[RMDB]
RNA sequence: GGGAACGACUCGAGUAGAGUCGAAAAUUGCAAGCCUUCGGGCUUGCAAGGUGUCGGAAUGCGGAAUAUAUAAUCCUCCGCUUAUGGAUUAUACCGACUUAAGUGCCAGGCUGUUCGCAGCCUGGAAAUUUCGACCGGUAUUCGUACCGGUCGAAAUAAAAGAAACAACAACAACAAC
Reactivity to DMS in 0.01 (KOAc 150mM, MgCl2 10mM, bicine 150mM(pH8.5), 24C), signal-to-noise 1, nucleotides 027 to 126: u000u000g010c000a000a000g010c000c000u000u010c240g020g010g050c000u000u010g010c000a030a000g000g030u000g010u000c000g010g010a270a120u000g010c060g020g000a110a100u010a150u010a110u030a080a120u000c100c050u010c060c100g000c110u000u010a100u000g010g010a100u000u000a130u000a070c010c010g000a020c010u010u030a060a090g050u010g000c010c000a000g000g010c000u000g000u000u010c230g000c030a030g000c030c000u000g020g020a010a010

Chemical mapping of a 177-nucleotide RNA with DMS. The RNA was probed in 150 mM KOAc, 10 mM MgCl2 and 150 mM bicine (pH 8.5) at 24 C. The data come from the RNA Mapping Database (RMDB), library M2PK50. Reactivities are given for positions 27 through 126.